Chemical mapping of a 177-nucleotide RNA with 2A3 and DMS. Reactivities are rounded to 0.1 and cut off at 0 and 3. DMS adducts were read by reverse transcription with MarathonRT. The RNA was probed in 150 mM KOAc, 10 mM MgCl2 and 150 mM bicine (pH 8.5) at 24 C. The data come from the RNA Mapping Database (RMDB), library OK2TST.

[RMDB]
RNA sequence: GGGAACGACUCGAGUAGAGUCGAAAACUGCGACGCCGGAAAGCGACGCGCAGGAGACGAGCGAUAGCGAUGUGGUGCGCUCUACCGGCUCGAUGGCGAUUGCUACGUUGGUGUCUCGUAUUACCGGCACCCUUACUCGUUUCGACGAGUAAGGGUGAAAAGAAACAACAACAACAAC
Reactivity to 2A3 in 0.01 (KOAc 150mM, MgCl2 10mM, bicine 150mM(pH8.5), 24C), signal-to-noise 3, nucleotides 027 to 126: c020u060g000c020g070a080c070g000c000c010g000g050a170a120a040g130c060g050a070c060g000c000g000c050a010g010g130a080g000a030c030g000a010g070c040g120a110u070a040g050c010g030a070u070g100u130g110g140u130g000c020g020c010u010c020u040a070c030c000g100g000c000u020c040g060a120u060g030g020c040g160a280u050u150g000c020u080a060c060g070u050u080g000g060u050g020u050c020u000c030g000u060a150u100u100a050c010c000g040g010
Reactivity to DMS in 0.01 (KOAc 150mM, MgCl2 10mM, bicine 150mM(pH8.5), 24C), signal-to-noise 3, nucleotides 027 to 126: c070u000g010c030g010a080c040g020c010c000g030g000a090a090a180g010c030g010a050c070g000c040g030c000a040g030g000a130g010a070c030g000a110g000c030g020a100u000a060g000c040g000a130u030g020u000g000g040u000g010c070g000c020u000c050u000a080c080c050g010g010c040u000c030g010a130u010g000g010c030g010a110u000u010g000c000u000a070c160g000u010u000g010g020u000g000u000c050u000c080g010u000a070u010u010a130c050c030g000g000